[RMDB]
RNA sequence: GGGAACGACUCGAGUAGAGUCGAAAAUGGGCUCUGGAAGCCUGGCCGGUGCUCGGCGUAACCAGAUUUACACCUCGGGUCUCGAGCGGAGACGCAGCAUUUUCUGCGCCCGGGGAGAUCAUUCGGUGGCAUCCCUGAAGGAGACCCUCCAUAAAUGCAUCCCGUUAAUCUUCGGAUUAACGGGAUGAAAAGAAACAACAACAACAAC
Reactivity to 2A3 in 0.01 (KOAc 150mM, MgCl2 10mM, bicine 150mM(pH8.5), 24C), signal-to-noise 1, nucleotides 027 to 156: u040g000g000g000c060u010c080u080g030g050a130a040g010c010c030u020g010g000c050c080g140g010u300g030c030u030c040g000g060c030g000u000a010a010c060c000a000g000a010u080u050u070a020c020a010c000c000u000c010g020g060g000u020c000u040c040g090a070g040c070g000g010a030g050a140c100g000c030a000g000c010a050u010u000u120u110c080u000g010c000g000c010c000c000g000g010g040g000a020g000a000u040c080a070u140u140c090g100g000u030g000g060c000a060u010c030c000c030u050g080a100a030g080g030a020g030a080c170c020c000u090c000c080a080u240a180a220a240u300g020